The record gives the reactivity of an RNA of 177 nucleotides to DMS and 2A3. It was measured as part of the RMDB library OK2TRN. 2A3 is a SHAPE reagent: it acylates the 2'-hydroxyl of flexible nucleotides of all four kinds. Conditions: 150 mM KOAc, 10 mM MgCl2 and 150 mM bicine (pH 8.5), 24 C. For DMS, 10,153 sequencing reads were counted. For 2A3, 4,220 sequencing reads were counted.
RNA sequence: GGGAACGACUCGAGUAGAGUCGAAAAUUAUAAACGAGAUCAGCCAAUUAAAAGUGCUGUAGAUGUUGUCAAAUCAAUCAAAGCUAGUCACAAAGGUGCUAUAGCCGUAAGCACAGUAGCCAAUCAAUACAAUAAUGCUAUUCGUAGCAUUAUUGUAAAAAGAAACAACAACAACAAC
Reactivity to DMS in 0.01 (KOAc 150mM, MgCl2 10mM, bicine 150mM(pH8.5), 24C), signal-to-noise 8, nucleotides 027 to 126: u010u010a120u010a070a080a110c080g010a110g020a120u010c020a050g010c020c040a080a120u010u010a070a100a140a150g010u010g020c010u000g010u010a090g010a100u010g010u000u000g000u000c110a060a070a090u010c100a050a070u010c090a050a120a100g000c050u000a040g010u010c090a070c100a070a100a100g010g020u000g000c030u000a180u000a090g010c030c060g000u000a080a080g020c020a010c030a080g010u000a050g010c020c060a080a070u010c100a060a140
Reactivity to 2A3 in 0.01 (KOAc 150mM, MgCl2 10mM, bicine 150mM(pH8.5), 24C), signal-to-noise 4, nucleotides 027 to 126: u080u020a070u090a140a100a000c050g010a020g010a150u040c010a000g020c010c010a050a090u160u190a170a140a060a040g110u160g080c020u020g030u050a050g010a070u090g030u110u010g020u030c060a060a060a080u070c060a020a030u060c020a000a140a000g050c030u050a010g060u120c020a010c040a150a130a040g050g000u040g010c010u040a010u050a140g040c030c020g060u060a020a020g000c010a020c010a040g060u040a010g020c010c010a020a050u160c040a040a020